Structure probing data (2A3 and DMS) for a 207-nucleotide construct. The reactions ran in a buffer of 150 mM KOAc, 10 mM MgCl2 and 150 mM bicine (pH 8.5), at 24 C. DMS adducts were read by reverse transcription with MarathonRT. For DMS, 7,563 sequencing reads were counted. Reactivities are given for positions 27 through 156. As a SHAPE reagent, 2A3 marks flexible, mostly unpaired nucleotides at the ribose 2'-OH.
RNA sequence: GGGAACGACUCGAGUAGAGUCGAAAAAGCACGGUUUUUGAGGACGCAUUUUGUCCGUGCGGUAAUGCCCUCCUUUACACUUUCUCGCAUGUUGCGGGAGUGUGGAGAGGAAACAAAAGCUAGUCUCGAUAGGCGGUUAACUUCGGUUAACCGCCAACCAUUAUGAAAUGUUCGCAUUUCAUAAUGGAAAAGAAACAACAACAACAAC
Reactivity to 2A3 in 0.01 (KOAc 150mM, MgCl2 10mM, bicine 150mM(pH8.5), 24C), signal-to-noise 8, nucleotides 027 to 156: a000g010c000a000c010g000g010u010u000u000u010u010g080a090g030g000a020c040g030c130a160u000u000u010u000g000u000c000c000g000u000g000c010g020g040u160a070a040u240g030c000c000c000u030c000c000u040u070u070a010c000a000c010u070u160u050c010u020c000g030c030a080u250g060u250u270g170c000g000g010g000a010g000u010g010u010g000g000a030g010a010g010g030a030a020a010c010a000a000a000a000g060c040u080a030g020u000c010u000c030g050a110u110a140g000g000c000g000g000u000u000a000a000c000u030u050c170g020g000u000u000a000a000c030c000g000c000c000a000a000
Reactivity to DMS in 0.01 (KOAc 150mM, MgCl2 10mM, bicine 150mM(pH8.5), 24C), signal-to-noise 2, nucleotides 027 to 156: a090g000c000a000c010g000g010u000u000u000u000u000g010a070g000g000a040c030g020c100a150u000u000u010u010g030u000c000c000g010u000g030c000g000g030u000a040a060u000g010c000c000c010u000c010c010u010u000u000a030c000a040c010u000u010u010c030u000c000g000c000a300u000g040u000u000g030c010g000g010g010a020g020u000g020u000g000g010a040g000a130g040g000a080a040a030c020a020a020a020a030g030c060u000a110g000u000c010u000c110g000a140u000a160g030g020c000g020g000u010u000a000a020c010u010u000c300g070g010u000u000a010a010c000c000g020c000c010a000a030